[RMDB]
Structure probing data (2A3 and DMS) for a 207-nucleotide construct. The data come from the RNA Mapping Database (RMDB), library OK3TST.
RNA sequence: GGGAACGACUCGAGUAGAGUCGAAAAUGAGCGGUAAAGAGAUUCACGGCACCGUAACCACUACAGGUAAGGAAUGGUAACAAUGGCAAAAGAUAUCACAGAUAAAGACACGCACGACGCGUUCACAACGUUUGAGCAAUUAGAGCGUGAAACGUUCUGUUGCUCCAAAAUUCGUUUUGGAGCAACAAAAAGAAACAACAACAACAAC
Reactivity to 2A3 in 0.01 (KOAc 150mM, MgCl2 10mM, bicine 150mM(pH8.5), 24C), signal-to-noise 3, nucleotides 027 to 156: u140g020a020g020c030g010g000u090a060a080a030g090a020g040a130u110u140c060a010c040g050g000c020a010c010c010g040u050a060a050c030c040a030c050u090a080c020a070g070g000u040a030a010g080g000a040a050u040g000g020u060a060a040c020a080a070u060g040g000c000a000a010a070a030g050a040u100a020u110c070a050c020a060g040a020u080a060a110a000g070a070c020a020c030g010c000a030c090g190a040c080g030c000g020u050u070c060a020c030a070a030c040g000u020u070u110g010a000g030c000a000a030u090u040a080g010a000g050c010g010u060g030a050a070a030c060g020u070u010c000
Reactivity to DMS in 0.01 (KOAc 150mM, MgCl2 10mM, bicine 150mM(pH8.5), 24C), signal-to-noise 2, nucleotides 027 to 156: u010g000a040g080c090g080g050u030a030a160a070g010a090g000a130u000u020c050a120c050g000g000c050a230c010c040g000u030a140a090c010c070a150c040u000a140c130a060g030g030u010a070a130g000g020a060a060u010g040g040u000a030a110c030a050a040u010g030g040c010a100a090a050a130g030a030u000a110u010c080a130c050a170g000a080u000a040a090a110g000a130c030a040c010g000c030a100c090g010a050c030g040c020g010u010u000c140a050c040a120a020c020g010u000u020u070g020a110g020c080a080a120u000u020a040g000a060g020c030g000u010g010a030a050a280c050g020u000u010c030

High DMS reactivity at an A or C suggests that its Watson-Crick edge is free.
The DMS profile rests on 2,361 reads.